[RMDB]
An RNA of 177 nucleotides, treated with DMS and read out base by base. The reactions ran in a buffer of 150 mM KOAc, 10 mM MgCl2 and 150 mM bicine (pH 8.5), at 24 C. For DMS the reverse transcriptase was MarathonRT.
RNA sequence: GGGAACGACUCGAGUAGAGUCGAAAAGAUAUGGAGCUGGUAGGGAGCUGAAUAUCGGAAACGAUAUUACCAGCGACGAUCUACCCAGCUCCUAAGUCAAAGCCCCUAUGGUUCGCCAUAGGGGCAACGGGAGUAUACGGUUCGCCGUAUACUCCCGAAAAGAAACAACAACAACAAC
Reactivity to DMS in 0.01 (KOAc 150mM, MgCl2 10mM, bicine 150mM(pH8.5), 24C), signal-to-noise 1, nucleotides 027 to 126: g010a030u000a050u020g000g000a020g000c000u000g030g000u020a000g030g000g010a010g020c000u000g030a070a010u010a010u020c000g000g030a010a000a010c000g000a020u000a010u000u000a090c300c000a000g000c000g040a130c270g020a040u000c000u000a000c220c030c080a020g020c000u000c000c000u000a000a030g000u010c030a090a060a160g000c000c000c010c000u000a010u000g000g000u020u020c300g000c010c000a000u000a000g000g000g030g040c000a000a000